[RMDB]
RNA sequence: GGGAACGACUCGAGUAGAGUCGAAAAACGGACUGAACGCUCAGACCGGUGUCUACGAGGAUCUGCUCGCUGCCGGCGUUGCUGACCCGGUCAAGGUGACCCGUUCGGCGCUGCAGAAUGCGGCGUCAAACGCUGGCACGUUCGCGUGCCAGCGUUUAAAAGAAACAACAACAACAAC
Reactivity to 2A3 in 0.01 (KOAc 150mM, MgCl2 10mM, bicine 150mM(pH8.5), 24C), signal-to-noise 2, nucleotides 027 to 126: a010c040g010g080a050c080u090g060a200a050c070g000c050u040c040a040g010a040c000c000g000g000u210g030u000c000u010a020c010g020a020g090g070a190u100c100u210g040c000u030c050g060c060u050g090c010c080g050g000c020g010u140u130g060c070u020g020a040c000c000c000g000g030u020c050a080a000g140g020u080g020a120c000c010c010g050u130u100c000g000g000c000g000c000u000g000c020a000g210a270a010u200g060c020g030g020c010g000u010c000
Reactivity to DMS in 0.01 (KOAc 150mM, MgCl2 10mM, bicine 150mM(pH8.5), 24C), signal-to-noise 1, nucleotides 027 to 126: a040c040g000g000a070c100u000g030a100a110c030g020c010u000c030a180g010a000c000c000g000g000u080g000u000c010u000a140c000g050a150g020g000a130u010c040u020g000c000u020c020g000c120u000g030c060c020g040g000c120g050u000u020g000c050u040g000a110c020c070c070g000g020u000c000a150a120g000g000u000g010a130c010c030c030g000u010u000c030g020g000c000g000c000u010g060c000a300g060a070a100u020g000c000g000g000c000g000u000c020